[RMDB]
RNA sequence: GGGAACGACUCGAGUAGAGUCGAAAACACAAAAAGCUGAUGCUGCCGGAGUGGUCAUCCGUAAGUAUUUCAGGAGUAAAUUCGACAUUAUUCAGAAAGACGACCUCUGUCCAGUAAACAAACAAAAAUGAUAAUAGGGUUUCGACCCUAUUAUCAUAAAAGAAACAACAACAACAAC
Reactivity to DMS in 0.01 (KOAc 150mM, MgCl2 10mM, bicine 150mM(pH8.5), 24C), signal-to-noise 5, nucleotides 027 to 126: c070a120c150a070a100a080a110a140g010c030u000g010a060u000g000c020u000g000c080c020g000g000a030g020u000g030g000u030c080a100u010c020c020g000u000a040a050g000u000a030u030u010u010c020a040g000g010a100g000u000a060a050a100u010u010c070g000a050c110a060u020u010a030u020u010c030a100g000a030a050a080g000a080c070g030a100c020c010u000c050u010g000u000c030c050a080g000u020a100a060a060c130a050a040a110c170a000a060a040a080
Reactivity to 2A3 in 0.01 (KOAc 150mM, MgCl2 10mM, bicine 150mM(pH8.5), 24C), signal-to-noise 8, nucleotides 027 to 126: c080a000c050a020a110a040a020a030g070c030u020g000a020u040g010c020u010g010c010c000g020g010a040g030u100g010g100u090c030a050u030c010c000g010u030a030a020g020u010a090u050u140u050c030a030g020g090a030g030u100a010a130a130u090u070c030g020a010c040a070u060u100a070u080u120c030a040g110a090a080a010g050a050c020g030a050c020c010u010c030u030g070u000c010c010a010g030u130a050a100a090c080a040a130a010c040a050a110a080a010
This 177-nucleotide RNA was probed chemically with DMS and 2A3.
The reactions ran in a buffer of 150 mM KOAc, 10 mM MgCl2 and 150 mM bicine (pH 8.5), at 24 C.